Conditions: 150 mM KOAc, 10 mM MgCl2 and 150 mM bicine (pH 8.5), 24 C. An RNA of 177 nucleotides, treated with 2A3 and DMS and read out base by base.
RNA sequence: GGGAACGACUCGAGUAGAGUCGAAAAGAUAUGGACGUAUUUCAGCUUUUGACGACGGGUGAUCGGAAACGAUCAUACCGUCGAUAAGCUGGUACGUCCUAAGUCAAAACUACAGUUCGCUGUAGAACUAGUAUAUAUCGUUCGCGAUAUAUACUAGAAAAGAAACAACAACAACAAC
Reactivity to 2A3 in 0.01 (KOAc 150mM, MgCl2 10mM, bicine 150mM(pH8.5), 24C), signal-to-noise 9, nucleotides 027 to 126: g010a010u050a050u140g000g000a000c010g010u010a020u040u300u180c100a000g000c010u080u120u250u300g300a270c090g000a000c000g000g020g010u010g010a000u010c010g010g030a050a060a030c020g000a000u000c010a000u020a060c000c010g000u000c000g000a000u000a000a010g000c000u000g000g010u000a000c000g000u000c000c000u000a000a000g000u000c010a000a020a110a170c010u020a010c000a020g030u050u140c270g090c140u020g010u020a010g020a040a070
Reactivity to DMS in 0.01 (KOAc 150mM, MgCl2 10mM, bicine 150mM(pH8.5), 24C), signal-to-noise 9, nucleotides 027 to 126: g000a040u000a300u010g000g000a010c000g010u000a000u000u010u020c000a000g050c000u000u000u000u010g020a260c130g010a010c000g010g000g020u000g000a010u000c010g010g000a090a090a150c000g010a010u000c000a010u000a070c000c000g000u000c000g010a030u000a010a020g030c000u000g000g010u000a000c000g010u000c000c000u000a010a060g010u000c020a100a080a130a230c000u000a010c010a010g010u000u010c270g020c010u000g000u000a010g000a110a280

For 2A3, 51,444 sequencing reads were counted.